Conditions: 150 mM KOAc, 10 mM MgCl2 and 150 mM bicine (pH 8.5), 24 C. Chemical mapping of a 177-nucleotide RNA with 2A3 and DMS. 2A3 adducts were read by reverse transcription with SuperScript II with manganese. It was measured as part of the RMDB library OK2TST.

RNA sequence: GGGAACGACUCGAGUAGAGUCGAAAAACAUCUCAGUGGACACAUGGCCGGGCCUGUGCACCAUCCUCAUCCAGUGCGUUGGCAGAGAGCUUGGCACCACCUCUGGAAAGAAAAGGGGGCCAGAGGCACCUCAACGACUAUUCGUAGUCGUUGAGGUAAAAGAAACAACAACAACAAC
Reactivity to 2A3 in 0.01 (KOAc 150mM, MgCl2 10mM, bicine 150mM(pH8.5), 24C), signal-to-noise 5, nucleotides 027 to 126: a000c060a090u050c030u020c050a070g040u100g060g050a020c020a010c030a230u150g100g000c020c030g040g040g000c010c020u090g020u040g050c020a050c020c020a030u050c000c010u040c010a100u040c030c050a040g030u010g050c050g090u140u090g050g000c040a010g020a010g000a010g070c020u030u040g030g000c020a040c030c010a030c010c000u000c010u010g040g060a170a060a030g110a060a210a110a060g010g000g000g000g000c000c000a010g010a020g010g030c010
Reactivity to DMS in 0.01 (KOAc 150mM, MgCl2 10mM, bicine 150mM(pH8.5), 24C), signal-to-noise 7, nucleotides 027 to 126: a100c200a110u000c020u010c030a120g020u000g010g000a170c080a050c090a080u000g010g010c030c050g010g000g010c030c020u000g020u000g010c030a070c050c030a050u000c050c030u000c100a070u010c080c100a090g010u000g010c090g010u000u000g010g010c040a060g010a090g010a100g010c040u000u000g010g020c050a120c090c100a130c020c000u010c010u000g000g000a090a090a100g000a050a040a120a130g000g010g000g010g020c020c000a020g000a040g010g010c210